Overview:
Structure probing data (DMS and 2A3) for a 177-nucleotide construct. Values cover nucleotides 27 to 126.
[RMDB]
RNA sequence: GGGAACGACUCGAGUAGAGUCGAAAAUCGGCUCGCGGUGCAGCAGUGUGGAGACCUGUUGUAAUACCUUCGUCACAUAUGCGGGCGUCGGUGAGCUGCGCAGUUAGCGGAUGCUGUGCGCGGCAGAUUAUACACGUUCUUUCGAGAACGUGUAUAAAAAAGAAACAACAACAACAAC
Reactivity to DMS in 0.01 (KOAc 150mM, MgCl2 10mM, bicine 150mM(pH8.5), 24C), signal-to-noise 4, nucleotides 027 to 126: u010c060g010g010c020u000c030g020c040g010g020u010g000c020a050g010c020a040g010u010g010u010g010g010a110g000a070c130c030u000g000u000u010g010u010a060a120u020a060c020c030u010u010c030g010u000c020a030c040a140u010a280u010g020c090g000g000g000c010g020u000c070g000g020u000g000a140g010c020u000g000c010g010c010a030g010u030u000a020g030c020g020g020a100u020g000c010u000g010u000g000c010g000c000g010g010c010a050g000a110
Reactivity to 2A3 in 0.01 (KOAc 150mM, MgCl2 10mM, bicine 150mM(pH8.5), 24C), signal-to-noise 9, nucleotides 027 to 126: u090c000g030g010c020u010c020g020c030g040g040u050g010c020a010g010c010a010g030u040g030u070g180g040a030g040a070c010c010u020g010u030u030g030u030a080a060u080a140c000c000u020u050c010g030u040c020a030c040a100u290a090u220g080c190g010g010g000c000g010u000c010g020g030u030g030a020g000c010u020g000c000g000c000a060g060u170u180a030g030c040g130g120a150u300g010c010u030g000u010g010c010g000c000g010g000c000a000g000a040